[RMDB]
RNA sequence: GGGAACGACUCGAGUAGAGUCGAAAAUAGGGCAGGGGUACUGCACUCUGGGAUGGCAGGCAAUUGCAUUUCCCUGCAAUCUUAUAUUGAUUGAGUAUAACCGCGAACUCAAUCGCUUCAAAGGGGGGCUAUCCAAAGAUUUCGAUCUUUGGAUAGCAAAAGAAACAACAACAACAAC
Reactivity to DMS in 0.01 (KOAc 150mM, MgCl2 10mM, bicine 150mM(pH8.5), 24C), signal-to-noise 2, nucleotides 027 to 126: u040a110g010g020g010c010a030g000g000g000g010u000a020c130u000g010c030a060c140u020c050u000g020g000g020a110u010g010g030c010a010g000g010c190a050a080u000u000g010c060a120u010u000u010c040c010c000u010g020c010a050a020u020c060u000u000a050u000a080u000u020g010a030u000u000g000a020g020u000a070u000a050a160c060c040g020c200g020a040a020c010u000c000a000a000u000c020g010c260u000u010c150a030a060a180g000g010g030g020g010
Reactivity to 2A3 in 0.01 (KOAc 150mM, MgCl2 10mM, bicine 150mM(pH8.5), 24C), signal-to-noise 1, nucleotides 027 to 126: u110a070g000g040g060c010a000g000g060g020g020u070a040c070u050g020c010a040c010u050c050u060g000g130g000a090u130g140g040c020a020g000g020c030a030a140u070u040g020c000a000u060u000u020c000c000c000u000g000c020a030a080u040c020u000u020a110u050a100u150u190g000a000u000u000g000a010g000u020a020u050a170a070c000c040g010c100g040a050a010c000u000c000a000a000u020c000g020c060u190u240c080a110a080a170g000g010g000g080g010